[RMDB]
RNA sequence: GGGAACGACUCGAGUAGAGUCGAAAACUUCGUGAACGAGCGACGAUGCAUUAGGUCCUUCGUUAUCCAACCGAAACAUCGUUACUAGUGUUGGAAUAAAUCAAGAUAGGCAGGCUAUCAUAGAAAGAAGUAGUGCGUUAUUCGUAGCGCGCUGCUUAAAAGAAACAACAACAACAAC
Reactivity to 2A3 in 0.01 (KOAc 150mM, MgCl2 10mM, bicine 150mM(pH8.5), 24C), signal-to-noise 9, nucleotides 027 to 126: c010u080u050c030g110u070g080a080a020c030g000a030g020c010g010a010c010g010a020u030g010c020a050u060u120a030g000g030u060c030c000u110u120c080g100u080u110a080u040c020c010a010a010c000c000g010a010a010a010c020a050u060c020g020u030u050a040c050u050a050g070u020g030u150u020g000g020a060a090u100a120a110a040u160c080a100a020g020a040u030a020g030g080c090a020g100g000c010u010a010u020c010a020u040a040g120a030a130a010g080
Reactivity to DMS in 0.01 (KOAc 150mM, MgCl2 10mM, bicine 150mM(pH8.5), 24C), signal-to-noise 9, nucleotides 027 to 126: c050u010u020c070g010u020g010a100a070c060g000a040g010c040g010a010c020g010a020u000g000c050a030u020u010a160g000g010u000c040c050u000u020c070g010u000u020a050u010c060c070a120a030c010c000g000a190a110a110c040a020u010c030g010u000u000a100c050u000a070g010u010g010u000u000g000g000a050a060u020a040a060a060u020c080a100a070g010a030u010a030g000g010c130a090g000g000c010u000a010u010c020a080u030a090g010a060a090a060g000